[RMDB]
RNA sequence: GGGAACGACUCGAGUAGAGUCGAAAACUUUCUUCGACCAGAUCAGAGAGCUGGUCCAGUUCAUAACCCAGCUUCAACACAUCCAUACCGUGUGUGCUUACGCAUCUAUUUGCUGUCGUGAGAUCUGCCAGCGCAGGCAUUUCGAUGCCUGCGCUGGAAAAGAAACAACAACAACAAC
Reactivity to 2A3 in 0.01 (KOAc 150mM, MgCl2 10mM, bicine 150mM(pH8.5), 24C), signal-to-noise 1, nucleotides 027 to 126: c040u140u190u180c070u130u150c000g000a000c000c020a000g030a000u050c070a140g140a020g000a000g120c000u000g000g000u000c020c020a000g000u030u120c050a010u040a240a300c000c000c000a050g000c000u020u030c000a030a050c000a000c000a090u010c050c050a000u110a050c000c000g020u060g030u030g000u000g000c000u060u120a040c050g000c020a000u000c040u100a300u080u090u100g030c030u000g000u110c000g000u020g020a050g000a000u020c020u030g030
The data come from the RNA Mapping Database (RMDB), library OK1LIB.
This 177-nucleotide RNA was probed chemically with 2A3.
The RNA was probed in 150 mM KOAc, 10 mM MgCl2 and 150 mM bicine (pH 8.5) at 24 C.
For 2A3, 394 sequencing reads were counted.